[RMDB]
RNA sequence: GGGAACGACUCGAGUAGAGUCGAAAAAACCACCCCCCCGCCCCCAUAAUUGAAAGCAUGGUUGUAAUUCCGGCAAUCUGGAGGCGUUCUGGACAGGGGUUCGAUUCCCCUCACCUCCACCCAAGGGAAUUCCUAAGGAAUUCGUUCCUUAGGAAUUAAAAGAAACAACAACAACAAC
Reactivity to 2A3 in 0.01 (KOAc 150mM, MgCl2 10mM, bicine 150mM(pH8.5), 24C), signal-to-noise 6, nucleotides 027 to 126: a000a000c020c010a000c010c000c000c000c010c000c000g010c000c000c000c000c000a020u080a110a120u170u140g080a070a010a000g060c050a060u110g070g010u040u050g040u150a120a090u130u040c010c010g020g000c030a010a040u040c050u060g040g010a020g010g000c040g030u130u060c080u140g050g030a050c030a070g000g010g000g030u010u040c020g020a020u060u100c000c000c000c020u020c010a040c000c000u000c000c010a040c010c020c020a060a050g050g000g000
Reactivity to DMS in 0.01 (KOAc 150mM, MgCl2 10mM, bicine 150mM(pH8.5), 24C), signal-to-noise 8, nucleotides 027 to 126: a100a060c050c030a160c040c000c000c000c010c010c030g010c030c000c000c000c020a080u020a060a060u030u010g010a070a080a140g010c090a050u010g010g010u010u000g000u010a080a160u010u010c030c010g000g010c060a050a080u020c050u010g000g010a040g010g010c060g010u010u010c070u010g010g010a120c180a050g010g010g000g010u010u020c190g000a300u030u010c000c010c000c000u000c070a080c020c010u010c010c010a100c060c020c040a160a090g010g000g010
The record gives the reactivity of an RNA of 177 nucleotides to 2A3 and DMS.
Conditions: 150 mM KOAc, 10 mM MgCl2 and 150 mM bicine (pH 8.5), 24 C.
For DMS the reverse transcriptase was MarathonRT.